[RMDB]
Source: RMDB libraries RFM100 and RFMREP, as collected in RNAgym. The record gives the reactivity of an RNA of 177 nucleotides to 2A3 and DMS. DMS (dimethyl sulfate) methylates the pairing face of unpaired adenines and cytosines.

RNA sequence: GGGAACGACUCGAGUAGAGUCGAAAAUCAGCCAGCUUCUCAGCGCCCAUCCCUCCGGAGAGCAGCCGGGGGGCAUGACCGACCCACCGGGGCGCCGCCUCCGGCGCUCGCAGGCCACGGGUGAAGACACCCUUAAUAAAUUCGUUUAUUAAGGGUGAAAAGAAACAACAACAACAAC
Reactivity to 2A3 in 0.01 (KOAc 150mM, MgCl2 10mM, bicine 150mM(pH8.5), 24C), signal-to-noise 6, nucleotides 027 to 126: u080c010a010g050c020c010a020g010c030u080u030c030u020c030a030g020c020g020c020c010c000a040u040c000c000c000u020c010c000g030g010a130g020a040g180c070a030g050c010c000g000g010g000g000g000g000c000a030u040g020a020c020c040g040a040c010c000c010a020c020c030g030g000g010g000c020g010c010c000g090c020c050u190c130c040g000g000c000g000c000u000c010g070c040a060g030g000c020c010a060c060g020g000g010u040g030a030a000g050a010
Reactivity to DMS in 0.01 (KOAc 150mM, MgCl2 10mM, bicine 150mM(pH8.5), 24C), signal-to-noise 5, nucleotides 027 to 126: u020c060a100g000c020c030a090g010c030u010u000c020u010c060a080g000c090g020c020c030c030a080u010c010c000c000u000c010c020g000g000a160g010a120g030c130a080g020c000c010g000g000g000g000g000g000c150a010u000g000a110c100c030g000a110c040c020c020a210c090c030g010g000g010g010c020g020c030c070g010c200c090u020c130c030g000g010c030g010c010u000c000g010c050a080g010g010c070c050a070c110g000g000g030u000g000a100a090g020a300

For DMS the reverse transcriptase was MarathonRT. Conditions: 150 mM KOAc, 10 mM MgCl2 and 150 mM bicine (pH 8.5), 24 C.